[RMDB]
RNA sequence: GGGAACGACUCGAGUAGAGUCGAAAAAUAUCCAGAAUAGGCAAAUCCAUAGAGACAGAAAGCAGAUUGGUGGUUGCCAGGGGCUAAGGGAGUAGAGAAUGGGGAGUGACUGCUUCAUGGUACAGGGCUUCCUUUUGGGGUGGUGAAAAUGCUCUGCCAAAGACAGGUAGUUCGCUACCUGUCUUUGAAAAGAAACAACAACAACAAC
Reactivity to DMS in 0.01 (KOAc 150mM, MgCl2 10mM, bicine 150mM(pH8.5), 24C), signal-to-noise 1, nucleotides 027 to 156: a040u000a120u020c040c020a110g000a050a070u000a060g000g030c020a040a100a100u020c030c040a120u000a130g010a180g030a100c080a110g030a090a080a120g000c040a030g010a100u010u010g060g020u000g000g010u000u010g040c030c050a080g060g040g020g030c050u000a050a110g020g000g010a150g040u000a080g010a150g010a090a070u000g070g010g020g010a060g000u010g010a090c010u010g000c000u000u000c100a080u000g090g000u000a070c060a020g000g020g030c040u000u000c040c000u000u000u000u000g020g010g000g040u010g040g000u000g000a010a040a040a090u000g000c040u010c020u020g000c220
Reactivity to 2A3 in 0.01 (KOAc 150mM, MgCl2 10mM, bicine 150mM(pH8.5), 24C), signal-to-noise 2, nucleotides 027 to 156: a000u100a050u050c020c000a060g010a060a180u080a050g060g000c050a060a040a040u000c020c020a050u050a090g050a010g020a080c030a030g140a060a090a000g020c030a020g030a110u020u120g040g000u020g020g010u120u120g000c020c000a000g010g020g010g000c020u040a020a040g110g020g020a040g000u110a050g000a010g060a080a110u120g050g000g000g000a060g000u050g070a120c040u060g040c000u080u110c060a080u140g030g010u040a020c010a000g010g000g040c010u040u020c000c000u140u030u120u050g020g000g000g020u050g050g000u080g000a040a030a020a000u050g000c000u010c030u090g160c270